[RMDB]
Overview
Conditions: 150 mM KOAc, 10 mM MgCl2 and 150 mM bicine (pH 8.5), 24 C. Chemical mapping of a 177-nucleotide RNA with 2A3 and DMS. Reactivities are rounded to 0.1 and cut off at 0 and 3. Reactivities are given for positions 27 through 126. For 2A3 the reverse transcriptase was SuperScript II with manganese.
RNA sequence: GGGAACGACUCGAGUAGAGUCGAAAACAGCAGCCUACAUCCCCAGCUGCUUACCUCUCUCCCAUCAUGCUCUAGUAGUGCUAUCAUGGGCAAACACAGUAGCUGACAUGCAGUGAUGUCUCCAUUCCGCAAAAAGCAGUUUCGACUGCUUUUUGCGAAAAGAAACAACAACAACAAC
Reactivity to 2A3 in 0.01 (KOAc 150mM, MgCl2 10mM, bicine 150mM(pH8.5), 24C), signal-to-noise 3, nucleotides 027 to 126: c030a000g000c000a010g000c000c010u120a130c060a150u060c000c000c000c000a000g000c000u010g000c000u010u050a070c020c000u030c010u030c000u010c010c000c000a010u050c010a000u110g000c010u010c000u020a080g040u010a030g030u080g070c000u040a070u300c020a050u060g000g040g010c020a070a060a020c040a000c010a030g070u080a000g080c040u030g030a070c020a090u120g000c000a010g030u020g070a030u070g070u010c020u000c050c000a080u100u040c020
Reactivity to DMS in 0.01 (KOAc 150mM, MgCl2 10mM, bicine 150mM(pH8.5), 24C), signal-to-noise 3, nucleotides 027 to 126: c190a030g010c010a030g010c010c020u020a160c230a180u000c030c000c000c050a270g000c010u010g000c030u010u000a060c050c040u030c110u000c050u030c000c010c000a080u030c090a070u000g070c020u000c070u010a080g040u020a120g020u010g000c050u010a110u040c050a120u000g010g020g020c100a080a050a060c110a060c070a030g020u010a060g000c040u000g000a130c120a030u020g000c090a040g030u000g000a040u010g000u000c010u010c010c040a180u020u010c060